[RMDB]
RNA sequence: GGGAACGACUCGAGUAGAGUCGAAAAGAUAUGGAAUGAAGAGGGAGCUACUGGUCGGAAACGACCAUUAGCGAGGAUCUCUCAUUCCUAAGUCAAAGCAAGAGCAACCUUCGGGUUGCUCUUGCAAGGCACAAUAUUAGUUCGCUAAUAUUGUGCCAAAAGAAACAACAACAACAAC
Reactivity to 2A3 in 0.01 (KOAc 150mM, MgCl2 10mM, bicine 150mM(pH8.5), 24C), signal-to-noise 2, nucleotides 027 to 126: g010a000u010a000u050g010g020a000a010u010g020a150a120g010a020g000g010g030a030g000c000u010a000c030u010g000g020u000c000g010g000a000a000a010c000g000a000c000c000a000u010u010a010g000c020g050a110g020g020a010u000c010u010c010u010c010a000u020u000c000c000u000a010a000g010u010c050a140a060a020g000c010a000a020g000a010g000c000a000a000c010c040u120u280c300g060g000g020u010u020g000c010u000c010u000u000g000c000a000a010
Reactivity to DMS in 0.01 (KOAc 150mM, MgCl2 10mM, bicine 150mM(pH8.5), 24C), signal-to-noise 2, nucleotides 027 to 126: g000a000u000a000u010g000g000a020a010u000g000a050a040g010a020g000g000g020a030g030c000u000a000c100u000g010g010u010c000g020g000a010a000a030c010g000a010c000c000a010u000u000a020g030c000g000a100g030g010a030u010c000u000c000u000c000a000u000u000c020c000u000a010a120g000u000c010a150a150a150g000c010a020a010g000a020g000c000a010a000c000c000u000u020c250g030g010g040u000u010g000c000u000c000u000u010g000c000a030a010
This 177-nucleotide RNA was probed chemically with 2A3 and DMS. Conditions: 150 mM KOAc, 10 mM MgCl2 and 150 mM bicine (pH 8.5), 24 C. For 2A3, 7,174 sequencing reads were counted. Source: RMDB library TTRDES, as collected in RNAgym. DMS adducts were read by reverse transcription with MarathonRT.